[RMDB]
RNA sequence: GGGAACGACUCGAGUAGAGUCGAAAAGUGCUUCCAUACGAUACAACGCCGGAAAUGCUUACAGAGGUCGACCCUGACUUAUUGUUCAUUUCAAACGGACCAGGUGACCCAGCGAACUUUGAGGCGGCACAAACGCUCGUCGAGGAGUACACUGGUGCUCCGAGAAUUCAUUCGUGAAUUCUCGGAGAAAAGAAACAACAACAACAAC
Reactivity to DMS in 0.01 (KOAc 150mM, MgCl2 10mM, bicine 150mM(pH8.5), 24C), signal-to-noise 1, nucleotides 027 to 156: g000u000g000c040u000u030c080c040a140u000a040c060g050a260u000a080c080a090a080c000g000c040c020g000g000a040a040a030u000g030c060u010u000a180c060a020g020a090g010g070u000c010g010a240c170c040c060u010g070a080c030u010u020a060u030u000g030u000u020c030a100u000u000u000c010a030a030a300c020g070g020a030c080c010a030g050g040u000g010a110c020c010c030a050g030c000g030a060a040c040u010u020u010g000a300g030g020c030g000g010c040a090c010a070a040a190c090g080c010u000c010g090u000c030g000a300g020g010a080g030u000a040c030a100c000u020g060g010u000g000
Reactivity to 2A3 in 0.01 (KOAc 150mM, MgCl2 10mM, bicine 150mM(pH8.5), 24C), signal-to-noise 3, nucleotides 027 to 156: g100u090g010c040u110u040c010c000a020u080a160c030g010a010u070a110c100a110a020c140g040c020c020g030g100a020a050a060u080g020c060u070u100a040c070a060g080a070g070g000u010c030g020a200c040c000c080u130g010a030c000u090u050a120u220u130g020u010u020c050a050u030u030u130c060a140a120a080c060g020g010a030c020c060a060g030g030u040g050a040c030c020c000a010g030c010g120a090a040c000u040u030u040g020a090g000g000c000g020g000c020a030c050a160a230a010c120g000c020u140c180g030u010c020g000a040g000g000a000g030u040a010c030a030c050u020g020g010u060g060
Chemical mapping of a 207-nucleotide RNA with DMS and 2A3. 2A3 adducts were read by reverse transcription with SuperScript II with manganese. DMS adducts were read by reverse transcription with MarathonRT. The 2A3 profile rests on 1,324 reads. The DMS profile rests on 1,359 reads.